RNA sequence: GGGAACGACUCGAGUAGAGUCGAAAAAUGCAGUUAGUAGCGUAUGACUAUCCUCCGGGCCGACAUAGAUCCGGGCUCCACCCAUUGCUAUGAGUUCUGGAUAAUUGCACAUUAAAAUCAGGACAAUCGCAGCUCCAAACAAGCAAACCGGAGCUACCCUGUACGCCUUCUUCGGAAGGCGUACAGGAAAAGAAACAACAACAACAAC
Reactivity to 2A3 in 0.01 (KOAc 150mM, MgCl2 10mM, bicine 150mM(pH8.5), 24C), signal-to-noise 1, nucleotides 027 to 156: a000u230g000c080a050g050u170u250a000g010u040a050g040c040g010u080a130u300g080a050c000u050a090u050c000c030u010c030c050g000g000g000c010c010g010a130c090a180u170a220g130a090u080c040c090g050g000g000c040u030c000c040a080c060c000c000a010u000u260g000c010u080a040u050g040a170g130u060u040c000u000g030g020a100u040a060a080u200u090g080c030a040c040a240u040u160a250a000a040a040u090c040a060g170g000a030c080a000a010u000c080g000c040a000g000c000u010c000c050a090a130a070c100a160a000g050c060a200a000a050c160c010g000g000a000g000c000u060a060c000
Structure probing data (2A3) for a 207-nucleotide construct. For 2A3 the reverse transcriptase was SuperScript II with manganese. Source: RMDB library OK3TST, as collected in RNAgym. The reactions ran in a buffer of 150 mM KOAc, 10 mM MgCl2 and 150 mM bicine (pH 8.5), at 24 C. The 2A3 profile rests on 273 reads.